[RMDB]
RNA sequence: GGGAACGACUCGAGUAGAGUCGAAAAAGCGACCUGAUACGUCAGGUCGCAAGUUCAGAUGAUGAAUUUAACUGUUCAACUGCUGAAUGAUAACGGGCAUGAACUAAAACUUAAUUCUGACAGAGAAGGCGUUUUGAAGGUUCGCCUUCAAAACGCCAAAAGAAACAACAACAACAAC
Reactivity to 2A3 in 0.01 (KOAc 150mM, MgCl2 10mM, bicine 150mM(pH8.5), 24C), signal-to-noise 1, nucleotides 027 to 126: a000g000c010g000a000c000c000u000g000a000u000a050c280g100u000c010a000g000g000u000c000g000c000a000a000g020u090u040c000a140g000a040u020g000a000u010g040a250a250u030u000u050a180a270c190u120g000u000u000c000a110a000c190u230g000c000u000g020a090a060u040g000a130u210a300a070c000g000g000g000c040a040u080g000a030a030c030u060a100a020a020a020c000u020u080a000a000u120u060c070u000g000a010c000a000g180a000g000a100a000
The record gives the reactivity of an RNA of 177 nucleotides to 2A3. The RNA was probed in 150 mM KOAc, 10 mM MgCl2 and 150 mM bicine (pH 8.5) at 24 C. It was measured as part of the RMDB library RFM100. 2A3 adducts were read by reverse transcription with SuperScript II with manganese.